Chemical mapping of a 177-nucleotide RNA with 2A3 and DMS. It was measured as part of the RMDB library OK2TST. The DMS profile rests on 2,579 reads. 2A3 adducts were read by reverse transcription with SuperScript II with manganese. The reactions ran in a buffer of 150 mM KOAc, 10 mM MgCl2 and 150 mM bicine (pH 8.5), at 24 C.
[RMDB]
RNA sequence: GGGAACGACUCGAGUAGAGUCGAAAAGGCGCUCGACAGGUUGUGGCGGCUCGACGAGCUGCAGGAUGUCGCCGCGCUGCCGCCGCUGUUCGUCGCGGGCUGAGCAAGGCGGGCCCAGCGGACCAAACUAGUGGCUAGUGUUCGCACUAGCCACUAGAAAAGAAACAACAACAACAAC
Reactivity to 2A3 in 0.01 (KOAc 150mM, MgCl2 10mM, bicine 150mM(pH8.5), 24C), signal-to-noise 2, nucleotides 027 to 126: g030g000c000g030c000u030c030g020a010c040a070g130g090u110u150g240u250g280g010c020g020g030c040u000c030g300a200c080g010a000g020c000u010g040c000a040g010g160a050u060g030u030c010g010c010c030g000c000g000c020u010g030c000c000g030c020c010g040c040u020g020u010u070c030g000u010c040g030c130g170g000g030c060u120g010a010g060c030a040a010g050g040c000g020g000g000c000c000c020a000g030c020g020g040a050c000c050a060a050a000
Reactivity to DMS in 0.01 (KOAc 150mM, MgCl2 10mM, bicine 150mM(pH8.5), 24C), signal-to-noise 2, nucleotides 027 to 126: g020g000c030g010c050u010c010g000a040c040a060g010g020u000u010g030u000g000g010c000g020g020c010u000c030g040a150c230g010a060g010c010u000g000c030a090g000g000a140u000g000u000c010g020c110c200g030c060g000c020u000g000c000c020g010c040c050g000c100u000g000u000u000c080g000u000c100g010c190g000g000g000c010u000g000a070g020c030a090a120g010g020c020g000g000g000c020c060c010a130g000c060g010g000a080c070c060a080a070a200